[RMDB]
RNA sequence: GGGAACGACUCGAGUAGAGUCGAAAAGAGGAAGAGAGCAAGAUAGAGGAGCCCCCGUGACGCUGGCAGCAUCGCGGACUGGGAGAAGAGAGGCGAAGAAAAGAAGGGGAGUCCCCGAUCGAAUGUCACACCUGGAGCUUCGGCUCCAGGAAAAGAAACAACAACAACAAC
Reactivity to DMS in 0.01 (KOAc 150mM, MgCl2 10mM, bicine 150mM(pH8.5), 24C), signal-to-noise 2, nucleotides 027 to 129: g040a020g000g010a050a060g020a060g040a030g000c060a070a090g020a220u080a060g040a040g000g030a210g110c030c080c070c020c050g020u030g010a050c190g010c050u000g000g030c130a080g020c020a080u050c080g010c080g030g020a130c090u020g020g070g000a000g020a100a010g070a040g000a020g050g030c100g030a000a050g060a120a070a000a020g070a030a070g030g010g000g000a060g090u030c070c050c030c140g010a090u050c030g020a130a050u080g030u000c090a080c090a130
Reactivity to 2A3 in 0.01 (KOAc 150mM, MgCl2 10mM, bicine 150mM(pH8.5), 24C), signal-to-noise 2, nucleotides 027 to 129: g070a010g000g000a040a020g010a010g000a000g010c060a020a060g060a220u210a100g040a010g050g010a000g000c000c000c020c020c000g040u040g000a030c030g020c030u030g200g000c020a030g030c000a030u030c030g000c020g040g000a030c010u040g010g010g000a080g000a150a000g070a000g000a000g020g000c040g050a010a010g010a010a060a000a000g050a000a000g000g000g000g000a020g010u040c010c000c000c000g030a020u080c010g000a030a050u140g080u180c040a010c010a010

Source: RMDB library 15KLIB, as collected in RNAgym. The record gives the reactivity of an RNA of 170 nucleotides to DMS and 2A3. The RNA was probed in 150 mM KOAc, 10 mM MgCl2 and 150 mM bicine (pH 8.5) at 24 C. For 2A3 the reverse transcriptase was SuperScript II with manganese.